[RMDB]
RNA sequence: GGGAACGACUCGAGUAGAGUCGAAAACGAGCGUCGAGCCGGUGCAGCCGCAGGCCGCGGCGGGCGUCAUGGAUACGCUGUCGGCCGCGCUUCGGCUGCGCGUCGCCGAGCGCACGCGCGCGCAGCAUAUAGCUCAGGGAUUCGUCCCUGAGCUAUAAAAAGAAACAACAACAACAAC
Reactivity to DMS in 0.01 (KOAc 150mM, MgCl2 10mM, bicine 150mM(pH8.5), 24C), signal-to-noise 2, nucleotides 027 to 126: c050g000a050g000c030g020u000c040g010a140g010c040c040g030g000u000g000c030a020g010c000c000g040c220a030g010g010c090c080g040c000g000g010c010g000g000g010c000g000u010c050a250u010g030g020a180u010a020c010g010c000u000g000u010c000g000g000c000c000g020c010g000c020u000u000c020g010g010c000u000g000c000g010c050g020u010c160g000c040c040g000a090g010c040g000c040a080c130g000c030g000c020g000c020g020c070a090g020c110a180
Reactivity to 2A3 in 0.01 (KOAc 150mM, MgCl2 10mM, bicine 150mM(pH8.5), 24C), signal-to-noise 1, nucleotides 027 to 126: c010g000a040g050c010g020u080c020g030a050g050c030c000g000g000u050g010c000a020g040c020c010g000c020a020g030g040c180c080g000c010g010g010c000g000g010g000c030g020u030c060a220u290g190g020a160u060a080c020g000c010u080g300u300c050g300g000c000c000g000c010g010c000u040u020c010g010g000c000u030g010c020g010c020g040u030c030g040c070c000g110a070g000c000g000c030a020c060g070c030g000c010g000c000g010c000a030g000c030a030
Source: RMDB library OK2TRN, as collected in RNAgym. This 177-nucleotide RNA was probed chemically with DMS and 2A3.